[RMDB]
RNA sequence: GGGAACGACUCGAGUAGAGUCGAAAAUUGUGUGACAGUUAUCUGCUUCAAAUCAGAGAAUACUCUUGACCUCUUUGCAAGAGUGAAGAGAAGUCUGACAGGGCGUAAGACAAAACUAACAAGACUAAGUCACCAAGACCGCCUUGUAGGUCUGCACCCUCUCCCCCGAAUUCGUUCGGGGGAGAGGAAAAGAAACAACAACAACAAC
Reactivity to 2A3 in 0.01 (KOAc 150mM, MgCl2 10mM, bicine 150mM(pH8.5), 24C), signal-to-noise 1, nucleotides 027 to 156: u080u000g040u030g000u000g020a030c010a030g020u050u020a090u100c000u060g020c010u070u130c110a140a000a100u090c000a040g010a000g090a090a060u170a290c000u040c000u030u030g190a240c010c000u020c000u040u180u200g000c000a000a140g020a040g040u070g020a000a000g000a000g030a030a060g080u030c000u010g030a030c130a050g120g000g000c030g080u110a080a020g060a080c090a030a130a000a030c050u080a030a000c020a140a030g050a110c010u110a170a000g040u000c000a020c050c000a000a000g090a030c000c000g050c000c000u070u110g100u040a060g000g060u000c030u010g000c020a150c010